[RMDB]
RNA sequence: GGGAACGACUCGAGUAGAGUCGAAAACCACAGAUCUUCGGAUCUGUGGAAACAACAAAUACUGUCAGUUGAGACAGACACUAAUACAUUGAGUGUACAAUGAAAGCGAUUGCUUCGGCAAUCGCAAUCACAGAUACUACUUCGGUAGUAUCUGUGAAAAAGAAACAACAACAACAAC
Reactivity to 2A3 in 0.01 (KOAc 150mM, MgCl2 10mM, bicine 150mM(pH8.5), 24C), signal-to-noise 6, nucleotides 027 to 126: c000c000a010c000a000g010a000u020c000u120u170c250g130g000a000u010c010u000g000u000g000g030a020a060a020c030a030a000c010a010a100a050u180a130c010u010g020u010c020a140g050u110u170g160a080g010a090c010a010g070a010c000a000c020u160a160a160u230a140c110a120u130u210g080a020g050u040g010u070a040c060a030a150u190g110a180a070a000g010c000g000a000u010u010g000c000u020u050c200g090g000c000a000a000u000c000g000c000a000a000
Reactivity to DMS in 0.01 (KOAc 150mM, MgCl2 10mM, bicine 150mM(pH8.5), 24C), signal-to-noise 3, nucleotides 027 to 126: c020c000a020c000a010g010a000u000c000u000u010c210g040g010a010u000c000u000g000u010g000g000a020a040a060c070a090a080c150a100a100a080u000a180c000u000g000u010c010a190g020u010u000g000a180g010a000c000a030g010a110c090a010c030u010a060a030u000a110c190a110u000u010g020a030g020u000g010u000a110c190a080a060u010g010a080a140a090g020c000g010a020u000u000g010c020u000u010c220g020g020c000a050a000u000c000g000c000a030a010
This 177-nucleotide RNA was probed chemically with 2A3 and DMS. The reactions ran in a buffer of 150 mM KOAc, 10 mM MgCl2 and 150 mM bicine (pH 8.5), at 24 C. It was measured as part of the RMDB library M2PK50. The 2A3 profile rests on 6,386 reads.